The record gives the reactivity of an RNA of 177 nucleotides to DMS. The DMS profile rests on 705 reads. DMS adducts were read by reverse transcription with MarathonRT. Source: RMDB library OK2TRN, as collected in RNAgym. The reactions ran in a buffer of 150 mM KOAc, 10 mM MgCl2 and 150 mM bicine (pH 8.5), at 24 C.
RNA sequence: GGGAACGACUCGAGUAGAGUCGAAAAGCAGUAAACUACACAAAGGCACCUGAAGUUUUCUUGAACACUUCAAUACCUAAUCCACCCGACUUUAAGGAGGAGUUAGAUAAAUGGUUUAAGAAUCAGAAAAACACCAUCCAUUCGUGGAUGGUGUUUUAAAAGAAACAACAACAACAAC
Reactivity to DMS in 0.01 (KOAc 150mM, MgCl2 10mM, bicine 150mM(pH8.5), 24C), signal-to-noise 1, nucleotides 027 to 126: g010c060a070g010u000a050a090a230c050u000a050c050a070c150a090a060a040g010g010c030a090c090c030u010g040a070a080g010u020u000u000u000c000u000u010g040a010a030c030a080c080u000u020c080a070a090u000a040c040c010u010a070a050u000c010c010a130c040c000c080g010a110c190u030u010u010a150a090g020g000a140g000g000a030g000u010u000a010g000a010u010a070a040a060u010g000g010u000u000u000a010a010g000a030a080u000c100a050g010a050